[RMDB]
RNA sequence: GGGAACGACUCGAGUAGAGUCGAAAAGUAAAGGCCGAACGAGCGCUAAUGCGCAUGCUAGAAAAUGGUAGGCCAUCGUAGUGUGAGCAUGAGCACGAAAGAAACACACUCAUGCACGUGCAAAAAACAUUUUGCGCAUGUUCGCAUGCGCAAAAUGAAAAGAAACAACAACAACAAC
Reactivity to DMS in 0.01 (KOAc 150mM, MgCl2 10mM, bicine 150mM(pH8.5), 24C), signal-to-noise 1, nucleotides 027 to 126: g020u000a010a120a200g000g010c040c000g000a140a220c070g030a080g000c060g000c000u000a100a050u020g040c020g000c000a020u010g020c050u000a110g000a040a120a070a040u000g000g030u020a020g000g010c020c000a120u000c100g020u000a110g050u000g020u000g020a140g000c040a000u020g000a030g020c060a030c120g020a050a090a100g040a060a080a180c130a050c160a120c000u000c000a020u000g000c000a010c100g020u000g000c050a000a050a040a080a010a040